[RMDB]
Structure probing data (DMS and 2A3) for a 207-nucleotide construct. 2A3 adducts were read by reverse transcription with SuperScript II with manganese. Values cover nucleotides 27 to 156. Conditions: 150 mM KOAc, 10 mM MgCl2 and 150 mM bicine (pH 8.5), 24 C. For 2A3, 3,545 sequencing reads were counted.

RNA sequence: GGGAACGACUCGAGUAGAGUCGAAAACUGGAUCCGAAGCCUCUAGAAGGAUAAUAUAGGCACUCCAUACCCUACUCCGACUCAAUACGUCCCCGUCGUACAGAAUGGUAACAUAUCGCUCCAAAUAAAAACGUUGUCUCGUUCGCGAGACAACGAACAUACUAGCUUUCUUCGGAAAGCUAGUAUGAAAAGAAACAACAACAACAAC
Reactivity to DMS in 0.01 (KOAc 150mM, MgCl2 10mM, bicine 150mM(pH8.5), 24C), signal-to-noise 2, nucleotides 027 to 156: c070u000g000g000a050u000c010c030g020a130a260g000c020c030u000c070u000a180g010a210a150g000g020a110u010a050a100u000a120u000a100g010g000c070a100c080u020c020c030a170u010a040c020c040c000u010a050c000u010c030c010g040a100c020u000c040a090a140u000a120c020g020u000c000c000c040c030g030u000c060g000u000a140c070a070g000a090a070u000g020g000u000a020a060c040a080u000a040u010c000g020c030u000c010c040a080a040a180u010a030a080a110a070a110c010g020u000u010g020u000c000u020c000g020u000u010c230g040c040g010a010g020a010c000a000a000c010g010a010a050
Reactivity to 2A3 in 0.01 (KOAc 150mM, MgCl2 10mM, bicine 150mM(pH8.5), 24C), signal-to-noise 5, nucleotides 027 to 156: c030u020g020g020a030u130c020c020g070a100a030g030c040c010u070c050u130a150g050a200a060g190g010a070u120a190a080u200a070u070a080g010g000c040a030c060u010c010c000a030u040a090c010c010c000u020a040c020u000c040c030g070a050c030u020c050a050a100u090a160c040g050u040c010c000c000c020g060u070c000g000u040a050c020a060g070a080a100u090g030g000u050a080a000c010a060u120a070u100c030g000c020u030c010c010a080a040a080u140a060a080a020a040a010c000g000u000u000g010u010c000u000c010g030u070u040c150g000c020g070a000g000a000c000a000a000c000g000a000a000